Chemical mapping of a 177-nucleotide RNA with DMS and 2A3. The reactions ran in a buffer of 150 mM KOAc, 10 mM MgCl2 and 150 mM bicine (pH 8.5), at 24 C. 2A3 adducts were read by reverse transcription with SuperScript II with manganese.

[RMDB]
RNA sequence: GGGAACGACUCGAGUAGAGUCGAAAAGAUAUGGAGGGACCACGGCCAUGACCCGGUAUCGGAAACGAUACACGCAUGGCUUCUCCCUCCUAAGUCAAAGAUUUUCAUUGUUCGCAAUGAAAAUCAAUCCAAUACAUGCGUUCGCGCAUGUAUUGGAAAAAGAAACAACAACAACAAC
Reactivity to DMS in 0.01 (KOAc 150mM, MgCl2 10mM, bicine 150mM(pH8.5), 24C), signal-to-noise 3, nucleotides 027 to 126: g040a010u020a300u000g000g000a020g000g030g000a030c130c200a060c210g010g000c010c010a010u000g010a140c150c120c190g000g000u000a010u010c010g020g010a130a110a210c000g000a010u000a000c010a060c300g010c000a010u000g000g000c010u000u020c110u000c000c000c000u020c000c010u000a000a040g010u010c050a090a110a070g010a010u000u000u000u000c000a000u000u010g000u000u020c180g010c010a010a000u000g000a010a000a000a000u010c000a100a130
Reactivity to 2A3 in 0.01 (KOAc 150mM, MgCl2 10mM, bicine 150mM(pH8.5), 24C), signal-to-noise 2, nucleotides 027 to 126: g000a010u050a030u120g010g000a040g010g000g010a030c100c050a050c230g040g020c020c000a000u020g060a300c030c100c150g150g010u000a020u020c000g000g030a080a050a040c020g000a010u000a000c130a020c070g070c000a010u010g000g000c000u040u010c010u010c000c000c000u020c000c000u000a070a020g030u000c040a100a050a090g000a010u000u000u000u000c000a000u030u000g050u070u100c300g020c120a000a000u010g000a000a000a000a010u000c010a000a070
It was measured as part of the RMDB library TTRDEL.